[RMDB]
RNA sequence: GGGAACGACUCGAGUAGAGUCGAAAAUCCGACUCUCAUAGGCUCUCCAACCCAACUCCUACUCAAUACGUCCUCGUCGUACAGAACGGUAACAUGUUUUCCGAACAUCCGCGCUUGGGUAUACGAAAAAGGCGUAGAUUAUUCGUAAUCUACGCAAUUCGUCUCAGAUAUUCGUAUCUGAGACGAAAAAAGAAACAACAACAACAAC
Reactivity to 2A3 in 0.01 (KOAc 150mM, MgCl2 10mM, bicine 150mM(pH8.5), 24C), signal-to-noise 2, nucleotides 027 to 156: u030c010c010g020a040c030u030c000u000c010a070u050a160g040g020c000u000c000u000c050c030a080a080c020c000c000a040a050c020u010c030c040u040a010c030u020c070a060a110u090a070c040g030u040c030c010u030c020g080u020c040g010u070a090c020a070g070a110a030c000g040g000u010a070a020c050a130u120g040u060u030u050u000c030c020g020a050a040c010a060u030c030c020g000c010g000c120u040u070g000g000g050u100a080u050a090c000g110a110a000a000a020a040g140g000c000g020u000a000g010a000u020u010a000u020u060c110g040u020a010a000u000c000u000a020c000g000c020a000a010
Reactivity to DMS in 0.01 (KOAc 150mM, MgCl2 10mM, bicine 150mM(pH8.5), 24C), signal-to-noise 1, nucleotides 027 to 156: u000c050c030g020a040c020u010c010u000c020a110u000a100g000g010c020u000c020u010c040c040a050a120c020c020c020a110a080c020u000c030c020u000a040c030u010c020a070a080u000a120c020g040u000c000c010u000c000g050u000c050g000u000a140c090a060g000a050a110c040g020g050u000a080a080c110a060u010g010u030u000u000u000c040c050g000a070a020c030a130u000c000c010g010c050g000c080u000u000g010g040g020u000a120u030a100c030g020a070a020a050a140a100g020g000c000g050u000a010g000a040u000u000a080u000u000c250g030u000a020a010u000c010u010a010c000g000c000a010a010
The record gives the reactivity of an RNA of 207 nucleotides to 2A3 and DMS.
Values cover nucleotides 27 to 156.
The reactions ran in a buffer of 150 mM KOAc, 10 mM MgCl2 and 150 mM bicine (pH 8.5), at 24 C.